The record gives the reactivity of an RNA of 177 nucleotides to 2A3 and DMS.
Reactivities are given for positions 27 through 126.
The data come from the RNA Mapping Database (RMDB), library OK2TRN.
The DMS profile rests on 9,928 reads.
RNA sequence: GGGAACGACUCGAGUAGAGUCGAAAAGGUAUGGUGUCUCACGCCUGUAAUCCCAGAAGUUUGGGAAAUCAAGGCAGGAGAAUUGCUUGGGGCCAAGAGUUCAAGACCUGCCUGGGCAACAUAGUGACCACUAGAAUUUUUUCGAAAAUUCUAGUGGAAAAGAAACAACAACAACAAC
Reactivity to 2A3 in 0.01 (KOAc 150mM, MgCl2 10mM, bicine 150mM(pH8.5), 24C), signal-to-noise 4, nucleotides 027 to 126: g110g020u110a040u140g020g030u020g120u030c010u020c030a020c020g000c000c000u030g040u050a060a070u020c000c000c000a000g060a120a040g050u150u190u080g030g000g010a040a050a030u170c100a100a030g010g010c010a000g010g040a050g040a080a060u060u090g120c000u030u040g050g030g120g040c080c010a040a010g010a010g010u030u060c040a070a020g020a110c010c010u000g000c000c000u010g030g010g030c020a050a010c010a050u120a040g150u090g110a050
Reactivity to DMS in 0.01 (KOAc 150mM, MgCl2 10mM, bicine 150mM(pH8.5), 24C), signal-to-noise 7, nucleotides 027 to 126: g010g020u000a040u010g010g010u010g000u010c010u000c020a070c050g000c010c010u000g010u010a140a210u000c000c000c000a080g000a100a060g020u010u000u010g010g000g010a100a120a110u020c100a060a040g010g010c000a050g000g020a140g000a030a040u000u010g020c010u000u000g000g020g020g020c160c030a020a050g010a070g000u000u000c040a090a130g010a110c010c000u000g010c010c010u000g010g000g010c050a050a040c040a060u010a080g010u010g010a280